[RMDB]
RNA sequence: GGGAACGACUCGAGUAGAGUCGAAAAGAUUACGUGUCGUUGUGGAAUCGAUACUACGCACGAGAUUCCAAGGUCUCUGUAGUACGUCCGCUCGUGACGUCUUUGGAGUCACGUUCGACAUACGAAAGGAUUCUACUAGGUUCGCCUAGUAGAAUCCAAAAGAAACAACAACAACAAC
Reactivity to DMS in 0.01 (KOAc 150mM, MgCl2 10mM, bicine 150mM(pH8.5), 24C), signal-to-noise 5, nucleotides 027 to 126: g020a150u020u010a060c140g010u010g020u000c000g000u000u010g020u000g000g000a030a050u030c020g000a180u010a010c030u000a010c000g040c190a090c100g010a070g020a010u000u030c150c240a130a110g000g000u000c020u000c000u010g020u000a030g010u000a000c010g010u000c000c000g000c040u030c030g020u010g010a000c000g000u020c040u020u050u090g010g010a120g010u000c000a020c000g000u010u030c010g010a000c020a040u020a070c100g000a070a110a080
Reactivity to 2A3 in 0.01 (KOAc 150mM, MgCl2 10mM, bicine 150mM(pH8.5), 24C), signal-to-noise 7, nucleotides 027 to 126: g100a060u200u210a030c090g000u010g020u020c010g020u060u100g020u030g030g060a050a070u250c040g020a040u010a030c000u000a010c020g030c030a030c140g000a000g000a000u100u080c220c060a100a080g130g000u010c000u000c000u010g000u010a000g000u000a010c010g000u000c000c010g000c030u030c010g020u020g020a010c030g260u060c040u130u110u230g180g030a060g000u010c000a000c020g030u080u060c010g010a000c010a010u090a070c060g080a100a040a030